[RMDB]
RNA sequence: GGGAACGACUCGAGUAGAGUCGAAAAGAUGCCUGCCGGAUGACCGGGCAGUACCUCCUCGAUGAUCUGCGACAUCCGCAUAUUGGUGCCCUGUUCGAGCCCCUUGACCAGGGACACCACUGGCACCAUUGGACUUUAGGUUCGCCUAAAGUCCAAUAAAAGAAACAACAACAACAAC
Reactivity to DMS in 0.01 (KOAc 150mM, MgCl2 10mM, bicine 150mM(pH8.5), 24C), signal-to-noise 3, nucleotides 027 to 126: g000a070u000g010c030c010u000g010c180c020g040g010a060u010g000a170c070c060g030g000g030c020a030g000u000a090c090c010u000c040c080u010c070g010a090u000g020a090u000c030u000g000c040g000a120c050a040u010c020c030g040c090a080u000a090u000u010g010g040u010g020c000c000c040u000g000u000u010c010g010a100g010c100c040c090c110u000u000g000a030c060c020a050g000g000g020a070c000a010c010c010a010c200u000g010g010c010a070c060c060
Reactivity to 2A3 in 0.01 (KOAc 150mM, MgCl2 10mM, bicine 150mM(pH8.5), 24C), signal-to-noise 2, nucleotides 027 to 126: g120a030u110g020c010c000u030g050c080c040g030g010a020u050g060a120c050c040g030g100g000c010a030g030u140a130c000c030u040c020c020u060c040g170a230u150g020a090u070c020u070g020c010g050a050c010a040u020c000c020g030c010a040u130a080u180u110g000g000u000g020c000c000c000u000g010u030u020c010g020a030g100c000c000c020c100u010u050g000a000c000c010a010g020g010g050a040c000a000c010c000a010c030u030g000g020c030a020c030c010
This 177-nucleotide RNA was probed chemically with DMS and 2A3. The RNA was probed in 150 mM KOAc, 10 mM MgCl2 and 150 mM bicine (pH 8.5) at 24 C. The 2A3 profile rests on 1,932 reads.